[RMDB]
RNA sequence: GGGAACGACUCGAGUAGAGUCGAAAAGCUGAGGAAUUUGAGACGGAGUACGUACGCAUUGCGUCCAAAACAGGUUCCAAAGAGGAGCGGGUACGCGAGUAUUAUGCAGGGGAGGAAAAACGGCGUGCUAGUGAUGACUGUUCGCAGUCAUCACUAGAAAAGAAACAACAACAACAAC
Reactivity to 2A3 in 0.01 (KOAc 150mM, MgCl2 10mM, bicine 150mM(pH8.5), 24C), signal-to-noise 5, nucleotides 027 to 126: g030c020u030g000a040g020g050a050a050u050u070u030g110a110g000a020c040g020g030a060g060u170a040c050g050u080a020c160g050c120a050u010u270g060c000g000u000c000c000a000a030a010a100c040a030g000g040u010u000c010c000a040a050a000g020a010g020g010a030g000c090g000g000g020u060a020c020g020c010g010a010g030u060a060u300u070a040u160g050c010a020g010g020g000g000a070g030g020a010a060a060a020a000c030g020g000c000g010u040g010
Reactivity to DMS in 0.01 (KOAc 150mM, MgCl2 10mM, bicine 150mM(pH8.5), 24C), signal-to-noise 4, nucleotides 027 to 126: g040c030u000g030a300g000g000a000a010u000u010u000g010a090g030a190c090g000g000a080g020u010a090c070g040u030a080c130g030c120a060u010u010g010c020g000u020c030c050a040a040a120a200c090a030g000g000u000u000c000c000a030a170a070g000a120g000g010a090g000c060g000g000g020u000a020c030g010c020g000a080g000u020a080u010u030a060u040g030c050a110g000g000g010g000a140g000g000a040a050a060a050a130c060g000g020c060g020u000g000